[RMDB]
RNA sequence: GGGAACGACUCGAGUAGAGUCGAAAAACAACAUGCCCAGGUAGCCCAGACCUCCAAGGCUACGGUGCGUUGCGACGCACGGUCUGAUUCUUCACAACGACGUUCACCGCGUCUUCUUCCAUCCCCCUCCAGCGCACGAAGUUCGCUUCGUGCGCAAGAAUUGUAACUGCUUCGGCAGUUACAAUUCAAAAGAAACAACAACAACAAC
Reactivity to DMS in 0.01 (KOAc 150mM, MgCl2 10mM, bicine 150mM(pH8.5), 24C), signal-to-noise 1, nucleotides 027 to 156: a060c080a070a070c080a190u000g040c000c020c090a160g040g030u010a030g010c050c010c130a130g010a080c050c020u000c010c090a110a140g020g000c020u010a000c010g000g010u000g000c030g120u000u000g060c080g000a060c040g000c010a050c020g030g000u000c010u010g000a290u000u010c070u020u000c000a130c040a110a070c020g060a110c040g000u000u000c060a130c110c070g010c020g000u000c020u000u010c040u020u010c030c020a110u000c000c020c010c000c010u010c040c110a140g040c010g120c000a040c040g010a030a020g010u000u010c190g030c020u000u000c000g010u000g020c000g000c000a000a000